Source information: Conditions: 150 mM KOAc, 10 mM MgCl2 and 150 mM bicine (pH 8.5), 24 C. Chemical mapping of a 177-nucleotide RNA with DMS and 2A3. Values cover nucleotides 27 to 126. Values are in units of 0.01, from 0 to 300, in steps of 10. For 2A3, 17,793 sequencing reads were counted.

[RMDB]
RNA sequence: GGGAACGACUCGAGUAGAGUCGAAAAGAUAUGGAAGGAAGCCGAUAAGAUCGUAUCGGAAACGAUACAGAUCUUUUGACGGCUCAUUCCUAAGUCAAAGUUAGCUUACCUUCGGGUAAGCUAACAAGCGUUAUCUAUAGUUCGCUAUAGAUAACGCAAAAGAAACAACAACAACAAC
Reactivity to DMS in 0.01 (KOAc 150mM, MgCl2 10mM, bicine 150mM(pH8.5), 24C), signal-to-noise 5, nucleotides 027 to 126: g010a010u000a180u000g000g000a030a010g000g010a090a080g010c000c000g010a120u010a040a010g010a010u000c000g010u000a010u000c000g010g000a040a020a080c000g010a010u000a010c000a090g010a010u000c000u000u000u000u010g010a210c080g000g000c000u000c020a070u000u000c000c000u010a030a110g000u000c030a080a100a120g010u000u000a010g000c000u000u000a000c000c000u000u010c250g040g000g010u000a000a000g000c000u000a000a000c000a070a110
Reactivity to 2A3 in 0.01 (KOAc 150mM, MgCl2 10mM, bicine 150mM(pH8.5), 24C), signal-to-noise 3, nucleotides 027 to 126: g010a000u050a010u070g000g000a010a000g040g020a190a040g010c020c010g100a170u130a300a030g010a000u010c000g000u000a000u000c000g020g000a030a010a010c010g000a010u040a010c110a080g000a000u000c000u010u050u050u130g080a020c000g010g000c000u000c000a010u010u000c000c000u010a060a010g010u010c050a170a040a060g010u000u000a000g000c000u000u010a010c010c000u000u080c180g010g000g000u000a000a000g000c000u000a000a000c000a000a010